[RMDB]
RNA sequence: GGGAACGACUCGAGUAGAGUCGAAAACAGUGGCGUCCCUCACAGAUGGGACACGACUUAAGAGGAAUCCCAGGCUGUGGGCAUUCCUUGGCCUAGUGGCCAGAUUUCCGGCACUUGAAGCAAGAUCCUGGGGGAGGAAGUCCUGAAGGAACGCCUGAUGAUAACGAAACUUCGGUUUCGUUAUCAUAAAAGAAACAACAACAACAAC
Reactivity to DMS in 0.01 (KOAc 150mM, MgCl2 10mM, bicine 150mM(pH8.5), 24C), signal-to-noise 1, nucleotides 027 to 156: c120a110g000u010g020g020c010g010u000c000c000c000u030c050a300c180a160g010a130u030g000g010g000a030c020a020c030g000a080c000u000u030a140a160g000a150g010g000a080a080u010c000c000c000a150g020g000c040u000g000u010g020g010g040c110a060u000u010c000c000u000u000g000g030c020c020u020a140g010u000g000g020c010c000a110g030a090u000u010u000c040c010g040g010c030a080c010u010u000g000a050a100g040c060a120a140g010a150u000c040c020u000g010g000g010g040g000a110g000g010a060a060g010u000c000c030u000g010a120a080g000g020a040a060c010g010c040c010u000g000
Reactivity to 2A3 in 0.01 (KOAc 150mM, MgCl2 10mM, bicine 150mM(pH8.5), 24C), signal-to-noise 2, nucleotides 027 to 156: c070a010g020u060g050g020c040g010u000c050c020c010u050c030a200c020a120g120a110u170g000g000g030a010c030a010c060g080a040c020u110u090a060a060g040a030g030g060a040a000u030c000c000c000a030g110g040c090u090g050u040g120g010g010c000a030u030u000c000c040u020u070g000g000c000c010u080a090g070u080g220g060c010c000a020g040a080u100u160u050c070c050g000g040c050a020c060u030u080g080a070a010g030c020a040a010g040a060u010c010c050u040g000g000g010g000g000a060g020g060a040a010g040u050c090c030u070g050a040a020g020g010a050a010c020g010c030c020u040g020

About this RNA:
This 207-nucleotide RNA was probed chemically with DMS and 2A3. The RNA was probed in 150 mM KOAc, 10 mM MgCl2 and 150 mM bicine (pH 8.5) at 24 C. For 2A3, 1,268 sequencing reads were counted. DMS adducts were read by reverse transcription with MarathonRT. For 2A3 the reverse transcriptase was SuperScript II with manganese. For DMS, 2,692 sequencing reads were counted.